About this RNA: Chemical mapping of a 177-nucleotide RNA with DMS and 2A3. Reactivities are rounded to 0.1 and cut off at 0 and 3. The data come from the RNA Mapping Database (RMDB), library TTRDEL. Conditions: 150 mM KOAc, 10 mM MgCl2 and 150 mM bicine (pH 8.5), 24 C.

RNA sequence: GGGAACGACUCGAGUAGAGUCGAAAAGAUAUGGAUCUUAGAACUACAGCUUUGACUCGGAAACGAGUCUUUGCUGCUAAGAGUCCUAAGUCAAAUCCCUUAGUUGCGUUCGCGCAACUAAGGGAAAGACUAUUAACCACUUCGGUGGUUAAUAGUCAAAAGAAACAACAACAACAAC
Reactivity to DMS in 0.01 (KOAc 150mM, MgCl2 10mM, bicine 150mM(pH8.5), 24C), signal-to-noise 3, nucleotides 027 to 126: g000a060u010a300u000g020g000a230u000c000u010u000a000g020a110a040c110u010a300c020a000g000c000u000u000u010g000a020c000u010c000g010g000a090a080a240c010g000a040g000u000c000u000u010u000g000c010u000g000c020u000a010a010g000a060g010u010c000c010u010a040a080g020u000c030a090a130a190u000c010c000c000u000u000a000g000u000u000g010c020g020u010u010c250g010c020g000c000a020a000c000u010a000a020g000g000g000a000a000a060
Reactivity to 2A3 in 0.01 (KOAc 150mM, MgCl2 10mM, bicine 150mM(pH8.5), 24C), signal-to-noise 2, nucleotides 027 to 126: g020a010u090a030u120g010g000a020u010c000u020u010a010g020a080a150c170u180a070c300a000g000c020u000u050u050g010a010c000u000c010g030g010a080a090a020c030g000a030g010u000c000u020u010u020g000c010u000g020c000u000a010a010g020a030g300u120c020c010u040a140a010g080u030c020a020a060a180u070c000c000c000u000u000a000g000u000u010g010c010g000u020u040c300g000c000g000c200a000a000c000u000a000a000g000g010g000a010a020a010
For 2A3 the reverse transcriptase was SuperScript II with manganese.